[RMDB]
RNA sequence: GGGAACGACUCGAGUAGAGUCGAAAAGGCAGUUAUGUGUACUUGCACUGAUAUUGUGAUUUGUAAGAUUACGGAAACUGCCAAAAACAAAUUAGAUUAUAUAAAGAAAUGUCUUAUUCUAGUUAAUCUAGCAUAUCCCUUUCGAGGGAUAUGCUAGAAAAGAAACAACAACAACAAC
Reactivity to 2A3 in 0.01 (KOAc 150mM, MgCl2 10mM, bicine 150mM(pH8.5), 24C), signal-to-noise 2, nucleotides 027 to 126: g010g000c000a010g000u090u140a200u150g010u030g000u160a030c000u000u030g000c000a000c050u050g110a020u090a210u060u300g040u150g040a070u000u000u000g010u000a000a000g000a240u050u300a000c000g010g000a120a060a000c000u000g000c000c000a000a000a000a000a240c000a000a080a000u010u010a000g030a000u200u100a050u190a030u180a300a150a000g040a000a150a000u080g000u000c030u000u060a110u000u070c030u000a000g030u000u020a000a010u000
Conditions: 150 mM KOAc, 10 mM MgCl2 and 150 mM bicine (pH 8.5), 24 C. This 177-nucleotide RNA was probed chemically with 2A3. 2A3 adducts were read by reverse transcription with SuperScript II with manganese. It was measured as part of the RMDB library RFM100.